Record summary: An RNA of 207 nucleotides, treated with DMS and 2A3 and read out base by base. In probing experiments dimethyl sulfate is read out at A N1 and C N3, which are open when not base-paired.
[RMDB]
RNA sequence: GGGAACGACUCGAGUAGAGUCGAAAAACUAUCGGCCAGCAGACAAAGGAUCUCAGCACUUUGAACGAUAAGCUUGUUGAUUUAGAAUCCUUGUUGAAUAAGUCAAGGCAGAUCGUGAAGUUCAUUGAGAAGCAAGACAAGCACGAUAAACGGCGCAGACCAUCCAUUUAUUCGUAAAUGGAUGGUCAAAAGAAACAACAACAACAAC
Reactivity to DMS in 0.01 (KOAc 150mM, MgCl2 10mM, bicine 150mM(pH8.5), 24C), signal-to-noise 4, nucleotides 027 to 156: a090c050u010a060u000c040g010g000c040c020a110g020c040a210g010a110c060a060a080a080g010g000a130u000c010u000c020a090g080c070a050c030u000u000u000g000a120a110c050g030a050u000a040a140g040c030u000u010g000u010u000g000a060u010u010u000a110g010a130a100u000c030c050u000u010g020u010u000g020a080a110u000a030a050g030u010c010a050a080g000g030c030a060g000a060u000c020g020u000g010a070a070g010u000u000c040a100u010u010g010a090g000a060a100g020c040a040a100g010a090c080a050a110g010c030a050c020g020a100u000a030a070a120c050g010g020c040g010c070a200
Reactivity to 2A3 in 0.01 (KOAc 150mM, MgCl2 10mM, bicine 150mM(pH8.5), 24C), signal-to-noise 6, nucleotides 027 to 156: a000c060u070a040u070c020g030g000c020c030a020g000c030a010g040a060c020a050a100a040g090g050a070u010c040u010c080a020g050c030a020c020u060u050u110g090a150a030c030g060a080u050a140a050g010c030u060u050g050u070u020g060a060u030u030u120a050g040a080a060u040c020c000u040u040g040u090u060g030a080a090u130a130a000g010u020c020a020a010g050g000c010a020g030a100u010c030g010u020g030a010a020g010u070u080c040a070u130u040g020a030g020a100a030g070c060a040a010g030a060c010a070a050g040c030a010c070g040a020u070a060a100a010c050g050g000c060g020c060a010